[RMDB]
RNA sequence: GGGAACGACUCGAGUAGAGUCGAAAACUUUGCCUCGGCCAUGUCUGAGAACGACAACGUGUUCUGUGCCCAGCUUCAGUGCUUCCAUUUCCCCACCCUGCGGCACCACGACCUCCACAGCUGGCACGUGGAACACGGCUUUCGAGCCGUGUUCCACAAAAGAAACAACAACAACAAC
Reactivity to 2A3 in 0.01 (KOAc 150mM, MgCl2 10mM, bicine 150mM(pH8.5), 24C), signal-to-noise 1, nucleotides 027 to 126: c030u250u100u030g000c020c010u010c050g000g000c010c010a060u150g010u000c050u080g020a000g010a090a070c190g000a050c050a040a030c060g120u190g140u190u230c010u060g040u040g010c060c000c000a020g030c000u050u040c000a100g040u040g080c000u020u000c000c050a080u020u030u030c020c000c010c000a000c070c000c020u040g040c120g010g010c000a000c000c010a060c040g090a070c000c060u000c030c070a070c090a060g010c000u030g000g110c040a000c010
Chemical mapping of a 177-nucleotide RNA with 2A3. It was measured as part of the RMDB library OK1LIB. Values are in units of 0.01, from 0 to 300, in steps of 10. The 2A3 profile rests on 422 reads. Conditions: 150 mM KOAc, 10 mM MgCl2 and 150 mM bicine (pH 8.5), 24 C.